RNA sequence: GGGAACGACUCGAGUAGAGUCGAAAACACACUCCCUUCGGGGAGUGUGAAAGAACGCGUGGGACACGCAAGGAGGAGCGUGUGGGACGCGACAAACCGAAAAAAGUGGAUAGUUCGCUAUCCACAACUUGACAAGCAAGUUCGCUUGCUUGUCAAGAAAAGAAACAACAACAACAAC
Reactivity to 2A3 in 0.01 (KOAc 150mM, MgCl2 10mM, bicine 150mM(pH8.5), 24C), signal-to-noise 3, nucleotides 027 to 126: c000a000c000a000c010u000c000c010c020u010u080c230g050g000g000g000a010g000u000g010u000g020a000a000a000g050a170a050c020g010c010g000u030g000g290g020a010c000a000c010g010c030a070a040g220g080a090g050g060a190g040c010g000u010g020u010g020g150g010a000c020g000c030g000a000c020a030a050a030c030c090g060a160a110a000a000a000a000g000u000g000g000a000u000a010g030u050u060c210g000c080u000a000u000c000c000a000c000a000a000
Reactivity to DMS in 0.01 (KOAc 150mM, MgCl2 10mM, bicine 150mM(pH8.5), 24C), signal-to-noise 2, nucleotides 027 to 126: c000a020c000a010c000u000c010c000c000u000u000c170g020g020g040g020a000g000u040g000u000g000a020a040a060g030a110a130c000g000c020g000u020g020g020g020a020c020a000c010g000c000a090a040g020g000a300g000g000a110g000c000g000u010g000u000g020g020g000a000c020g000c010g000a120c160a080a050a160c050c030g000a000a040a080a030a080a070g000u000g000g000a020u000a000g000u000u040c170g000c010u000a000u010c010c000a000c000a020a100